[RMDB]
Chemical mapping of a 177-nucleotide RNA with DMS and 2A3.
DMS adducts were read by reverse transcription with MarathonRT.
The RNA was probed in 150 mM KOAc, 10 mM MgCl2 and 150 mM bicine (pH 8.5) at 24 C.
Reactivities are given for positions 27 through 126.
2A3 adducts were read by reverse transcription with SuperScript II with manganese.
RNA sequence: GGGAACGACUCGAGUAGAGUCGAAAAGAUAUGGACGAUGAGCGAUAAGCUGCAUUCGGAAACGAAUGACAGCUUUUGACGCUCUAAGUCCUAAGUCGGACGAAAUCUUCCUUCGGGAAGAUUUCAACUGUGAAUAACGGUUCGCCGUUAUUCACAGAAAAGAAACAACAACAACAAC
Reactivity to DMS in 0.01 (KOAc 150mM, MgCl2 10mM, bicine 150mM(pH8.5), 24C), signal-to-noise 3, nucleotides 027 to 126: g010a020u000a160u000g010g000a010c000g000a270u000g000a010g020c000g020a120u010a010a030g000c000u010g000c000a010u000u010c000g000g000a040a030a070c030g010a020a000u000g000a150c000a000g020c000u010u010u000u000g020a190c020g000c000u010c000u010a110a250g000u010c000c000u000a010a070g010u000c000g010g000a210c220g000a010a000a000u000c000u000u000c000c000u000u010c250g030g000g000a010a010g000a010u000u000u000c010a040a100
Reactivity to 2A3 in 0.01 (KOAc 150mM, MgCl2 10mM, bicine 150mM(pH8.5), 24C), signal-to-noise 2, nucleotides 027 to 126: g030a010u030a020u060g010g000a000c010g070a060u240g000a000g000c020g080a090u030a300a020g000c000u000g000c020a000u000u000c000g010g010a010a050a020c020g030a010a000u050g170a160c000a000g010c000u030u010u010u030g020a000c010g000c000u000c000u000a000a010g000u000c000c000u000a010a000g000u010c010g020g000a050c100g000a010a000a010u000c000u000u000c000c000u020u100c230g110g000g010a000a000g000a010u010u000u000c000a000a000